[RMDB]
Structure probing data (DMS and 2A3) for a 177-nucleotide construct. It was measured as part of the RMDB library TTRDES. The RNA was probed in 150 mM KOAc, 10 mM MgCl2 and 150 mM bicine (pH 8.5) at 24 C. For 2A3, 27,498 sequencing reads were counted. For DMS the reverse transcriptase was MarathonRT. 2A3 adducts were read by reverse transcription with SuperScript II with manganese.
RNA sequence: GGGAACGACUCGAGUAGAGUCGAAAAGAUAUGGAGCCUGAGACGUUGAACUACGUCCAUGGAUCGGAAACGAUCCAGGACGCAACGUUAGUCAGGCUCCUAAGUCAAAAGCUACCUUCGGGUAGCAGGUAACAUUACAGUUCGCUGUAAUGUUACCAAAAGAAACAACAACAACAAC
Reactivity to DMS in 0.01 (KOAc 150mM, MgCl2 10mM, bicine 150mM(pH8.5), 24C), signal-to-noise 7, nucleotides 027 to 126: g010a040u000a300u000g020g000a010g010c000c000u000g010a040g010a020c000g000u000u000g000a120a100c160u030a300c040g000u010c000c010a120u000g020g000a000u010c000g010g000a140a090a250c000g010a010u000c000c000a020g000g010a010c000g000c000a000a010c010g000u000u000a140g000u000c000a000g010g010c000u000c000c010u000a010a080g010u010c030a100a100a150a160g010c000u000a010c000c000u000u010c220g020g010g010u000a000g010c010a020
Reactivity to 2A3 in 0.01 (KOAc 150mM, MgCl2 10mM, bicine 150mM(pH8.5), 24C), signal-to-noise 6, nucleotides 027 to 126: g030a000u090a040u170g010g000a000g010c020c000u020g000a010g020a010c000g010u010u020g030a130a090c150u200a070c300g000u010c010c020a300u050g000g010a000u000c010g010g020a070a050a030c020g000a000u000c000c000a010g010g010a000c010g000c010a000a000c010g000u010u040a080g160u020c010a000g000g000c000u000c000c000u000a000a000g000u000c010a000a000a030a110g010c000u000a000c010c000u040u070c190g120g010g000u000a000g000c010a000